[RMDB]
RNA sequence: GGGAACGACUCGAGUAGAGUCGAAAAGAUAUGGAAGGCACGUGAACUACUCGAUAAAGGGAGCUAAGACAGUCGAUCGGAAACGAUCGAUCGAGCUCCUGGAUUCGAGCACGUGCCUUCCUAAGUCGUGCUAGUUCUAGUUCGCUAGAACUAGCACAAAAGAAACAACAACAACAAC
Reactivity to DMS in 0.01 (KOAc 150mM, MgCl2 10mM, bicine 150mM(pH8.5), 24C), signal-to-noise 1, nucleotides 027 to 126: g000a070u000a300u010g000g000a060a000g000g000c000a070c020g000u010g000a100a010c120u000a300c000u000c000g000a080u000a070a300a280g000g000g000a000g080c000u000a300a070g040a230c300a070g000u000c000g000a020u000c000g030g000a050a090a170c000g000a000u000c000g000a010u000c100g000a030g000c000u010c030c000u000g000g010a300u000u000c000g010a000g000c030a040c000g000u000g000c030c000u000u000c000c000u010a040a040g000u000c080

Annotation
The record gives the reactivity of an RNA of 177 nucleotides to DMS. For DMS, 582 sequencing reads were counted. Conditions: 150 mM KOAc, 10 mM MgCl2 and 150 mM bicine (pH 8.5), 24 C.